[RMDB]
RNA sequence: GGGAACGACUCGAGUAGAGUCGAAAAUAUUAGUCAUUGUAGUGAAGAGAUUGUACAACCCAUCACUUUCUAACUUUGCGUUAGCAUUGUGCAGUGGUGUAAUGUGGUUGUACACUUAUAGCAUUGGUACCCUUUUACUUCGGUAAAAGGAAAAGAAACAACAACAACAAC
Reactivity to 2A3 in 0.01 (KOAc 150mM, MgCl2 10mM, bicine 150mM(pH8.5), 24C), signal-to-noise 9, nucleotides 027 to 129: u150a030u120u180a050g050u040c050a020u020u090g050u090a100g030u010g080a080a020g010a030g020a070u060u110g000u000a000c000a000a000c000c000c000a010u020c000a000c000u070u210u100c010u010a010a020c000u020u020u010g010c020g160u130u130a060g000c000a000u000u010g020u040g040c090a020g040u020g040g010u030g010u050a090a090u050g110u190g020g000u000u000g000u000a000c010a000c000u040u050a070u110a060g030c040a040u010u060g050g010u100a080c000
Reactivity to DMS in 0.01 (KOAc 150mM, MgCl2 10mM, bicine 150mM(pH8.5), 24C), signal-to-noise 8, nucleotides 027 to 129: u060a070u040u020a060g000u000c050a050u020u030g030u040a050g000u020g010a060a070g020a060g000a090u040u020g000u000a030c000a010a010c000c000c000a010u000c000a020c000u000u030u040c030u000a080a020c030u020u000u000g000c020g040u050u050a090g020c010a020u020u010g000u000g030c220a000g010u000g030g000u000g010u050a050a030u000g030u040g030g020u020u020g000u000a020c030a030c070u000u010a030u040a130g020c030a060u010u010g000g000u030a110c110
Chemical mapping of a 170-nucleotide RNA with 2A3 and DMS.
Values are in units of 0.01, from 0 to 300, in steps of 10.
Reactivities are given for positions 27 through 129.
The RNA was probed in 150 mM KOAc, 10 mM MgCl2 and 150 mM bicine (pH 8.5) at 24 C.
DMS adducts were read by reverse transcription with MarathonRT.